[RMDB]
RNA sequence: GGGAACGACUCGAGUAGAGUCGAAAAAUAAAUUUGCUAACACCUGAAACCGGGCGUAACUUUACCAUAUUAUUUGCACCUAAAAAUGCUAAUGGAAUACAGAUAAUUGCGGCGAUGAAAGUACCUACUCUCAGGUGGUGUUCGCACCACCUGAGAGAAAAGAAACAACAACAACAAC
Reactivity to 2A3 in 0.01 (KOAc 150mM, MgCl2 10mM, bicine 150mM(pH8.5), 24C), signal-to-noise 1, nucleotides 027 to 126: a000u240a100a020a000u210u000u190g040c020u120a130a080c070a070c020c020u000g000a030a030a000c000c000g000g000g000c000g060u000a060a030c070u100u080u210a150c030c000a000u000a140u300u160a140u000u130u030g030c010a050c000c130u230a040a040a040a040a040u060g010c030u150a000a000u000g000g120a030a030u190a030c000a030g040a020u150a080a080u230u040g000c000g030g030c000g050a050u120g030a000a000a190g050u070a010c000c000u100a090
Chemical mapping of a 177-nucleotide RNA with 2A3. Reactivities are given for positions 27 through 126. For 2A3 the reverse transcriptase was SuperScript II with manganese.